[RMDB]
RNA sequence: GGGAACGACUCGAGUAGAGUCGAAAAACACACAGAACAGUACAUGAGAAGUGCAGAUCAGGACCAGCGCUGAGGGCUGAGUGGGCGGCUCUAACUGCCGUGCUUCAAGAGUCUCUGCUGUCUCGGGCAGUGAGAACGAGUAGCCCCAUUCCUAGCCGUUAAUACCCAAGUUCGCUUGGGUAUUAACAAAAGAAACAACAACAACAAC
Reactivity to DMS in 0.01 (KOAc 150mM, MgCl2 10mM, bicine 150mM(pH8.5), 24C), signal-to-noise 2, nucleotides 027 to 156: a080c050a090c050a100c090a060g020a100a120c080a060g010u020a050c070a060u000g010a210g000a070a110g020u000g000c040a100g010a140u010c080a090g010g000a070c050c030a070g030c090g010c040u000g020a070g020g030g030c050u000g000a060g020u000g020g030g040c000g020g010c010u030c040u000a070a070c030u000g000c010c000g060u010g000c030u010u010c030a110a080g010a120g010u000c030u010c040u000g020c050u010g010u000c020u000c090g040g000g030c020a020g010u010g010a090g010a080a060c050g000a080g030u000a050g000c020c000c010c000a190u000u000c010c070u000a190g000c140c110
Reactivity to 2A3 in 0.01 (KOAc 150mM, MgCl2 10mM, bicine 150mM(pH8.5), 24C), signal-to-noise 5, nucleotides 027 to 156: a000c080a000c010a000c000a020g120a140a030c040a030g050u100a020c030a090u160g030a080g020a160a000g030u020g020c030a010g010a130u070c020a030g010g050a030c020c020a020g020c040g010c080u050g070a090g020g040g000c020u030g020a010g040u150g000g020g000c020g030g010c000u030c020u050a080a040c030u020g000c010c010g040u040g030c020u050u060c060a180a010g020a070g120u040c040u000c020u130g040c020u020g050u040c030u030c090g080g020g000c010a010g000u040g050a070g030a070a060c070g010a000g040u030a020g020c010c020c000c000a020u020u040c000c030u030a040g040c030c010
Annotation: Chemical mapping of a 207-nucleotide RNA with DMS and 2A3. The RNA was probed in 150 mM KOAc, 10 mM MgCl2 and 150 mM bicine (pH 8.5) at 24 C. Source: RMDB library OK3TST, as collected in RNAgym. Values cover nucleotides 27 to 156.